[RMDB]
RNA sequence: GGGAACGACUCGAGUAGAGUCGAAAACCAUUACUGGAACCUAUGAUCUGAAGAGCGUCCUGGGUCAACUGGGCAUCACUAAGGUCUUCAGCAAUGGGGCUGACCUCUCCGGGGUCACAGAGGAGGCCCUCUCUUUUCAAUUCGUUGAAAAGAGAGGAAAAGAAACAACAACAACAAC
Reactivity to 2A3 in 0.01 (KOAc 150mM, MgCl2 10mM, bicine 150mM(pH8.5), 24C), signal-to-noise 4, nucleotides 027 to 126: c000c000a000u010u110a060c030u020g030g030a040a030c010c010u070a130u170g050a080u150c060u140g080a150a070g040a080g120c060g070u130c010c010u040g020g000g090u220c080a170a130c060u010g000g020g000c000a030u030c030a040c100u050a080a050g000g040u000c010u030u020c010a000g000c010a010a060u040g000g010g030g040c050u040g040a090c000c010u030c020u010c060c110g070g000g000g040u050c040a010c040a060g100a040g100g030a020g030g040c000
Reactivity to DMS in 0.01 (KOAc 150mM, MgCl2 10mM, bicine 150mM(pH8.5), 24C), signal-to-noise 6, nucleotides 027 to 126: c000c000a050u000u000a030c040u000g010g000a060a090c080c060u000a090u010g000a090u010c110u000g010a130a110g000a060g020c180g000u010c010c000u000g000g000g000u010c210a110a170c040u010g020g000g010c050a090u010c030a080c100u010a130a050g000g010u000c070u000u000c010a020g010c050a030a030u000g000g000g010g020c130u000g000a040c020c010u000c020u010c110c120g010g000g010g000u010c050a060c100a080g000a060g000g020a300g020g010c150